The record gives the reactivity of an RNA of 177 nucleotides to DMS. DMS adducts were read by reverse transcription with MarathonRT. High DMS reactivity at an A or C suggests that its Watson-Crick edge is free. The DMS profile rests on 5,680 reads. It was measured as part of the RMDB library TTRINS.

[RMDB]
RNA sequence: GGGAACGACUCGAGUAGAGUCGAAAAGAUAUGGAAGCUGUUAUCGCAUGCCUAUGGACAUGCUUGAUGGUCGGAAACGACCAGAGAGCAACAGCCAUGAGGCAUGCGAUAACAGCUUCCUAAGUCACGUUUUAGUAUAGUUCGCUAUACUAAAACGAAAAGAAACAACAACAACAAC
Reactivity to DMS in 0.01 (KOAc 150mM, MgCl2 10mM, bicine 150mM(pH8.5), 24C), signal-to-noise 5, nucleotides 027 to 126: g000a060u010a300u000g000g000a020a010g010c000u000g010u000u010a000u000c010g000c000a010u000g020c000c010u020a020u000g000g010a050c080a300u000g010c010u010u000g010a300u000g020g000u000c000g010g000a120a110a290c000g000a020c000c000a010g000a300g000a000g000c000a010a050c300a130g000c010c000a000u000g010a030g010g010c000a000u000g000c010g000a000u000a000a020c000a000g010c000u000u000c010c000u000a000a050g010u000c060a240